[RMDB]
RNA sequence: GGGAACGACUCGAGUAGAGUCGAAAAGAUAUGGAUGUUGCAACAGCAAGCCUAUCGGAAACGAUAGCUUGACAUGCAAUAUCCUAAGUCAAACGCUGGUUUAUAUGUUCGCAUAUAAACCAGCGAACAAUAGGAAUCGGUUCGCCGAUUCCUAUUGAAAAGAAACAACAACAACAAC
Reactivity to DMS in 0.01 (KOAc 150mM, MgCl2 10mM, bicine 150mM(pH8.5), 24C), signal-to-noise 8, nucleotides 027 to 126: g010a030u000a220u000g000g000a010u000g020u000u000g010c000a030a070c290a170g000c010a000a000g010c220c070u000a000u000c000g010g000a060a060a110c010g010a000u000a020g000c000u000u000g010a140c060a180u000g000c000a010a000u000a010u000c000c000u000a010a070g000u000c010a110a090a210c030g010c000u000g000g010u000u000u000a000u000a000u000g000u000u010c220g010c000a010u000a000u000a000a000a000c000c010a000g010c000g000a010a040
Reactivity to 2A3 in 0.01 (KOAc 150mM, MgCl2 10mM, bicine 150mM(pH8.5), 24C), signal-to-noise 6, nucleotides 027 to 126: g020a020u050a020u130g000g010a000u000g000u030u010g020c040a090a100c050a300g100c000a020a000g000c020c040u010a000u010c010g000g020a050a040a010c010g000a010u010a000g000c000u020u040g090a200c030a040u030g000c010a000a010u000a010u000c000c000u010a070a020g030u030c050a090a050a100c030g000c010u010g000g000u000u000u000a000u000a000u010g050u050u100c300g010c160a000u010a000u000a000a000a000c010c000a000g000c000g000a000a000